[RMDB]
RNA sequence: GGGAACGACUCGAGUAGAGUCGAAAAGCUAGCUACGAUCGGAUAACUCUCGCUCUCUCAGAAACGAUCGUAGCUGGGAAAAUAAAAAUGAGAGAGGGAGAGGAAAGCGGAAACGCGAAAAUAAAAAGGGAUUAGAUUAGUUCGCUAAUCUAAUCCCAAAAGAAACAACAACAACAAC
Reactivity to 2A3 in 0.01 (KOAc 150mM, MgCl2 10mM, bicine 150mM(pH8.5), 24C), signal-to-noise 6, nucleotides 027 to 126: g090c000u020a000g000c000u010a000c000g010a010u010c020g060g070a170u110a300a260c010u020c000u000c020g170c110u010c010u000c010u000c020a040g240a160a170a070c030g000a010u000c000g010u000a000g000c010u000g000g010g010a040a040a040a010u250a030a030a020a000a040u220g000a000g000a000g000a020g000g050g000a010g000a000g000g050a100a050a010g030c010g010g040a090a050a010c020g010c050g040a060a040a050a020u200a010a070a010a010a000
Reactivity to DMS in 0.01 (KOAc 150mM, MgCl2 10mM, bicine 150mM(pH8.5), 24C), signal-to-noise 2, nucleotides 027 to 126: g000c000u010a010g000c000u010a000c000g000a010u000c010g070g000a180u010a050a160c020u000c040u000c040g010c000u000c000u050c000u000c000a020g000a140a040a060c040g020a000u000c000g000u000a000g000c000u000g060g000g000a040a070a050a070u010a030a080a080a140a250u000g090a030g000a000g010a010g000g010g000a010g000a030g010g020a040a040a130g020c000g000g020a130a090a120c000g000c010g050a070a010a120a080u110a060a110a070a110a120

An RNA of 177 nucleotides, treated with 2A3 and DMS and read out base by base. 2A3 adducts were read by reverse transcription with SuperScript II with manganese. Conditions: 150 mM KOAc, 10 mM MgCl2 and 150 mM bicine (pH 8.5), 24 C. DMS adducts were read by reverse transcription with MarathonRT. The 2A3 profile rests on 5,021 reads. The data come from the RNA Mapping Database (RMDB), library OK1LIB. For DMS, 2,382 sequencing reads were counted. Values cover nucleotides 27 to 126. Reactivities are rounded to 0.1 and cut off at 0 and 3.